[RMDB]
RNA sequence: GGGAACGACUCGAGUAGAGUCGAAAAGAUGCAACUCAAAGAGACUACUGUUUGGUUUGAGAGUUCCAGUGAAGCAACCACUUGGGAGCUGAAGCUUCGUGACCGCACCAGUCGUGUUAUCACACUGGACUCCGUUUAAGUAGUCACUGCGGUUGCACGUGAUUAGGGGAUUCGUCCCCUAAUCACGAAAAGAAACAACAACAACAAC
Reactivity to DMS in 0.01 (KOAc 150mM, MgCl2 10mM, bicine 150mM(pH8.5), 24C), signal-to-noise 2, nucleotides 027 to 156: g010a220u000g020c000a030a080c020u000c110a070a220a130g020a170g010a060c000u000a010c020u000g040u000u010u000g040g040u000u020u000g010a180g000a080g000u010u010c010c020a070g010u000g000a100a080g000c050a060a110c020c000a100c040u000u000g020g000g020a150g000c030u010g000a050a180g000c070u000u010c080g010u000g020a050c020c060g010c000a130c040c010a090g020u010c080g020u010g040u000u000a090u000c040a180c000a060c020u000g030g020a020c020u000c000c040g010u000u000u000a040a030g010u000a020g000u000c010a100c050u000g010c170g030g000u000u000g030c000a120
Reactivity to 2A3 in 0.01 (KOAc 150mM, MgCl2 10mM, bicine 150mM(pH8.5), 24C), signal-to-noise 5, nucleotides 027 to 156: g080a040u060g000c000a000a000c030u040c300a090a050a010g050a010g000a000c000u000a000c010u020g160u260u160u220g240g110u230u280u240g240a280g000a020g070u170u030c000c000a000g010u000g010a070a010g040c040a040a090c030c000a040c060u110u170g000g010g030a190g020c030u070g060a130a010g050c020u140u150c160g080u070g010a030c000c020g000c020a010c010c000a020g100u100c040g010u080g020u110u070a110u120c050a000c000a000c100u000g010g000a000c000u000c000c000g020u080u070u000a020a010g000u000a000g000u000c010a010c010u000g010c030g010g000u000u010g000c000a000
Structure probing data (DMS and 2A3) for a 207-nucleotide construct. Reactivities are given for positions 27 through 156. For 2A3 the reverse transcriptase was SuperScript II with manganese. For 2A3, 2,296 sequencing reads were counted. For DMS, 2,891 sequencing reads were counted. The data come from the RNA Mapping Database (RMDB), library OK3TST.